[RMDB]
RNA sequence: GGGAACGACUCGAGUAGAGUCGAAAACAAGACCAUGGAAACAAACAGAGAAGAACUCUAUGAUCUCUUGGAAACCCUGAGGAGACUUUCUGUCACCUCCAAGGUGAAGUUCAUCGUCUUCAAUCCGUAAGAGGGGUAGUUUCGACUACCCCUCUUAAAAAGAAACAACAACAACAAC
Reactivity to DMS in 0.01 (KOAc 150mM, MgCl2 10mM, bicine 150mM(pH8.5), 24C), signal-to-noise 1, nucleotides 027 to 126: c110a040a000g000a010c050c060a040u000g020g000a010a100a120c090a080a130a080c080a090g010a100g000a090a140g000a090a170c130u000c110u010a030u020g000a120u000c030u000c030u000u030g010g000a230a130a060c080c010c010u010g000a080g000g010a050g000a030c010u000u000u040c090u000g000u000c010a030c000c000u000c090c140a040a070g010g010u010g000a100a120g020u000u000c100a030u000c300g000u010c000u020u000c060a030a100u000c070c030g010
An RNA of 177 nucleotides, treated with DMS and read out base by base. DMS (dimethyl sulfate) methylates the pairing face of unpaired adenines and cytosines. Source: RMDB library OK2TST, as collected in RNAgym.